RNA sequence: GGGAACGACUCGAGUAGAGUCGAAAAUCGUGUCCUUGGGGCAUCCUGUCCUAGCAGCUGGUGGUUGGAGUGGAAGCUCAAGCAAGGAGGGGUCAGCUGCCUCUAAACUACCGCUUCUCCCUUCCUCACCUGUACAAGGAUUCGUCCUUGUACAGGUAAAAGAAACAACAACAACAAC
Reactivity to 2A3 in 0.01 (KOAc 150mM, MgCl2 10mM, bicine 150mM(pH8.5), 24C), signal-to-noise 4, nucleotides 027 to 126: u080c020g000u030g060u030c010c010u040u080g060g000g000g020c010a030u090c030c070u070g060u030c010c010u020a030g030c010a010g000c020u090g000g040u040g030g070u100u090g050g010a070g020u060g030g090a070a020g000c010u010c080a060a030g010c040a060a040g030g020a040g000g020g000g030u040c030a000g010c030u050g050c020c000u010c010u040a080a100a030c030u040a050c020c020g010c040u060u000c030u040c000c000c000u030u030c000c000u020c020
Reactivity to DMS in 0.01 (KOAc 150mM, MgCl2 10mM, bicine 150mM(pH8.5), 24C), signal-to-noise 6, nucleotides 027 to 126: u010c110g010u000g000u000c010c010u010u000g020g010g010g010c030a060u010c090c060u000g010u000c010c020u000a090g010c050a060g010c050u000g010g010u000g010g020u000u010g000g000a050g020u010g010g030a060a080g010c030u000c080a100a070g000c120a100a130g010g010a060g000g010g000g000u000c080a050g010c080u000g000c010c030u000c050u010a030a080a060c060u010a060c120c090g000c030u000u000c040u000c010c010c020u000u000c000c010u000c250